[RMDB]
RNA sequence: GGGAACGACUCGAGUAGAGUCGAAAAGAUAUGGAAUCAUCAAUUGCAAGGUCGACCACUCGGAAACGAGUGCAAGACUGAUGACCAAUUGAGUGAUUCCUAAGUCAAAAGCACUGUUCGCAGUGCAUCAGCGUACGAAGUUCGCUUCGUACGCUGAAAAAGAAACAACAACAACAAC
Reactivity to 2A3 in 0.01 (KOAc 150mM, MgCl2 10mM, bicine 150mM(pH8.5), 24C), signal-to-noise 1, nucleotides 027 to 126: g050a000u080a020u220g000g010a000a030u000c000a020u030c010a000a000u010u000g010c030a210a240g050g000u000c000g000a020c010c010a010c010u040c000g050g040a050a070a050c020g000a010g000u020g000c010a050a000g000a010c010u000g050a040u130g020a000c070c000a010a010u000u060g060a110g260u150g030a000u020u010c000c000u000a090a010g070u030c080a130a070a040a110g000c020a000c020u000g050u100u160c300g000c160a000g010u010g010c010a080
Reactivity to DMS in 0.01 (KOAc 150mM, MgCl2 10mM, bicine 150mM(pH8.5), 24C), signal-to-noise 3, nucleotides 027 to 126: g020a070u010a300u000g000g040a050a000u000c010a070u000c010a000a000u000u000g020c020a100a090g000g000u000c000g000a300c300c000a000c000u000c010g000g000a050a090a290c000g000a010g020u000g010c020a000a300g000a000c000u000g010a100u030g020a120c300c010a000a010u000u010g010a050g020u000g030a010u000u000c000c000u000a010a020g010u000c020a110a040a090a040g000c000a000c020u000g000u010u000c140g050c000a020g000u000g010c010a040
Source information:
An RNA of 177 nucleotides, treated with 2A3 and DMS and read out base by base. The reactions ran in a buffer of 150 mM KOAc, 10 mM MgCl2 and 150 mM bicine (pH 8.5), at 24 C. Values cover nucleotides 27 to 126. For 2A3, 2,679 sequencing reads were counted. For DMS the reverse transcriptase was MarathonRT.